Chemical mapping of a 177-nucleotide RNA with DMS and 2A3. The data come from the RNA Mapping Database (RMDB), library OK1LIB.

[RMDB]
RNA sequence: GGGAACGACUCGAGUAGAGUCGAAAAAGACAACAAUGAUGCAUGCAGUGAUUUGGAAGUUUCUGCUAUAGAUGCUUAUCCAUCAACAAGAACUAGAGAUUGGGACGCAGACUCCUUUAUAUUGACACUGACAUUAACCCUUCGGGGUUAAUGUCAGAAAAGAAACAACAACAACAAC
Reactivity to DMS in 0.01 (KOAc 150mM, MgCl2 10mM, bicine 150mM(pH8.5), 24C), signal-to-noise 1, nucleotides 027 to 126: a040g000a050c130a140a040c090a260a050u050g000a080u010g000c070a000u050g030c010a040g080u000g000a090u050u000u020g030g000a080a070g000u000u000u000c000u000g000c060u000a070u040a090g000a050u040g040c070u000u000a090u040c090c000a060u010c050a110a030c220a040a090g040a000a050c070u050a040g000a060g000a160u000u000g040g000g000a070c070g000c050a040g050a040c070u000c000c030u000u010u010a010u020a080u000u070g000a080c170a100
Reactivity to 2A3 in 0.01 (KOAc 150mM, MgCl2 10mM, bicine 150mM(pH8.5), 24C), signal-to-noise 2, nucleotides 027 to 126: a010g020a000c010a070a000c060a300a190u100g090a000u150g090c030a000u010g010c050a000g030u060g170a070u060u060u200g090g000a000a000g000u030u020u030c020u030g080c120u020a000u000a300g060a060u000g000c000u110u140a050u140c050c020a000u010c020a020a080c100a000a100g000a140a000c110u080a080g000a000g050a150u110u090g020g000g000a000c020g000c060a060g000a020c000u020c000c000u000u110u000a300u020a020u020u140g180a110c090a000